Source information
Chemical mapping of a 177-nucleotide RNA with DMS. Conditions: 150 mM KOAc, 10 mM MgCl2 and 150 mM bicine (pH 8.5), 24 C. For DMS the reverse transcriptase was MarathonRT.

[RMDB]
RNA sequence: GGGAACGACUCGAGUAGAGUCGAAAAGAUAUGGAAUGGUCUCACGCAGAAUUUAGUGCCAGCUCACUGUCGGAAACGACAGUUGAGCGGUAAUACUAACGGUUCUGCGUGAGACCAUUCCUAAGUCGAAAUGUAGGUACUUCGGUACCUACAUUUCAAAAGAAACAACAACAACAAC
Reactivity to DMS in 0.01 (KOAc 150mM, MgCl2 10mM, bicine 150mM(pH8.5), 24C), signal-to-noise 4, nucleotides 027 to 126: g020a100u000a300u000g000g020a020a010u000g000g010u000c000u010c000a010c010g030c000a060g000a020a010u000u000u000a000g010u000g010c020c000a150g010c000u010c010a020c010u000g000u000c000g010g000a100a120a260c010g000a000c000a010g000u010u000g040a010g070c000g000g020u000a050a110u000a220c040u020a010a090c300g020g000u000u000c000u000g000c000g040u000g000a010g000a000c000c000a000u000u000c000c000u010a000a060g020u000c160